The record gives the reactivity of an RNA of 207 nucleotides to 2A3. Reactivities are given for positions 27 through 156. Source: RMDB library OK3TST, as collected in RNAgym. The reactions ran in a buffer of 150 mM KOAc, 10 mM MgCl2 and 150 mM bicine (pH 8.5), at 24 C. Reactivities are rounded to 0.1 and cut off at 0 and 3.

[RMDB]
RNA sequence: GGGAACGACUCGAGUAGAGUCGAAAAGACAGUAUCCAGGAAGGACUGUGUGGGGCUACCUGCGGGUGCCAUCAGAAUGUUCAAACUCUCUGAUUCUCAGUUUUCCUAUUUGUAAAACAAAUAGGAAGUGGGCUUUGAGUCACACGGGUUCAAAUCCUGCAACCUCAUUAUUCGUAAUGAGGUUGCAAAAAGAAACAACAACAACAAC
Reactivity to 2A3 in 0.01 (KOAc 150mM, MgCl2 10mM, bicine 150mM(pH8.5), 24C), signal-to-noise 1, nucleotides 027 to 156: g030a030c040a030g100u120a150u100c050c040a030g070g030a060a030g030g000a010c030u010g000u000g000u000g060g060g000g130c010u130a080c030c000u030g000c260g040g010g010u000g000c000c010a010u010c000a000g090a100a050u170g060u130u300c150a150a130a140c030u040c000u000c020u060g030a090u100u000c020u010c000a020g000u120u060u010u200c000c000u010a000u000u030u000g030u030a040a040a170a130c000a000a000a000u000a010g010g040a000a010g000u080g040g100g000c030u150u060u190g000a000g000u000c010a000c000a010c000g040g020g000u020u080c020a070a150a040u050c090c010